An RNA of 207 nucleotides, treated with 2A3 and DMS and read out base by base. The 2A3 profile rests on 3,179 reads. For 2A3 the reverse transcriptase was SuperScript II with manganese. Conditions: 150 mM KOAc, 10 mM MgCl2 and 150 mM bicine (pH 8.5), 24 C. For DMS the reverse transcriptase was MarathonRT.

RNA sequence: GGGAACGACUCGAGUAGAGUCGAAAAUGGUCGCACACACUUCGAUGCGCUUAGGAUAAUAGAACAGCUGGAGAACAACCAACCUCAAGACAGGAAUAGGCUAGACAUAGCAGACAGAAUUGCAGCUGCGGAGGUUUAUGUGAGACAGUCUAUAGAGGCUAUUAACUAAUUUCGAUUAGUUAAUAGCAAAAGAAACAACAACAACAAC
Reactivity to 2A3 in 0.01 (KOAc 150mM, MgCl2 10mM, bicine 150mM(pH8.5), 24C), signal-to-noise 4, nucleotides 027 to 156: u100g030g020u080c020g000c020a000c000a000c010a010c050u070u090c050g100a120u060g020c030g000c030u040u040a040g030g040a100u090a200a080u070a150g070a030a020c010a040g010c010u040g020g020a070g060a070a030c040a040a040c020c010a010a050c000c010u030c040a050a060g050a070c020a050g060g040a070a080u080a080g060g000c020u030a010g010a050c060a070u080a010g000c020a010g020a040c020a030g150a110a060u150u130g020c040a030g020c010u070g020c020g020g020a020g050g000u080u070u070a050u080g030u010g000a010g010a020c030a020g010u010c020u050a080u060a120g070a030g120
Reactivity to DMS in 0.01 (KOAc 150mM, MgCl2 10mM, bicine 150mM(pH8.5), 24C), signal-to-noise 3, nucleotides 027 to 156: u010g020g040u000c040g010c010a070c080a050c030a090c000u010u000c030g030a070u000g000c020g020c050u000u010a120g020g010a130u000a100a180u000a100g000a050a070c010a050g020c020u000g010g020a110g020a090a070c030a080a100c040c030a070a120c030c010u000c060a060a120g010a170c050a070g010g000a100a140u000a080g020g000c020u000a070g010a070c130a110u000a100g040c030a060g000a180c060a110g000a060a100u000u000g000c060a080g010c030u030g040c070g020g010a100g020g000u010u000u000a010u000g010u010g010a150g000a110c020a060g000u000c020u000a100u000a120g010a240g000